[RMDB]
RNA sequence: GGGAACGACUCGAGUAGAGUCGAAAACUCUCUGAAGACGGACCUGCCCGUCUGGGGACAGGUUGGGGGGCCUGGGGCUUGCAGUGUUGCAGGUGAACUCUAGGGCCCUAUCUCUGCAAUGGGACGGAGCAACCUAAAAGUUCGCUUUUAGGUUGCUAAAAGAAACAACAACAACAAC
Reactivity to 2A3 in 0.01 (KOAc 150mM, MgCl2 10mM, bicine 150mM(pH8.5), 24C), signal-to-noise 1, nucleotides 027 to 126: c000u010c000u010c040u060g110a140a000g040a100c040g000g000a020c010c020u010g020c000c050c000g250u100c130u120g000g000g000g100a100c030a000g000g010u060u020g210g080g000g100g000g000c000c000u020g000g010g000g000c010u030u030g000c010a080g070u170g100u300u100g020c000a010g000g030u040g080a070a020c010u020c030u100a020g020g000g050c010c000c030u020a010u000c020u000c000u000g030c020a000a060u120g000g000g060a010c000g010g010
Reactivity to DMS in 0.01 (KOAc 150mM, MgCl2 10mM, bicine 150mM(pH8.5), 24C), signal-to-noise 2, nucleotides 027 to 126: c080u010c030u010c050u020g010a140a130g010a120c040g010g010a090c020c030u000g000c050c000c000g010u010c110u000g010g010g000g020a110c030a020g000g010u000u000g010g000g010g070g010g020c000c000u000g030g010g010g000c010u010u000g010c000a060g020u010g000u010u000g010c030a060g010g020u000g030a110a120c020u010c020u000a090g010g030g000c000c000c000u010a030u010c020u010c000u010g000c220a100a090u000g010g000g010a040c050g010g010
Overview:
Chemical mapping of a 177-nucleotide RNA with 2A3 and DMS. DMS adducts were read by reverse transcription with MarathonRT. The DMS profile rests on 2,605 reads. The reactions ran in a buffer of 150 mM KOAc, 10 mM MgCl2 and 150 mM bicine (pH 8.5), at 24 C. For 2A3, 937 sequencing reads were counted. Reactivities are given for positions 27 through 126. 2A3 adducts were read by reverse transcription with SuperScript II with manganese. It was measured as part of the RMDB library OK2TST.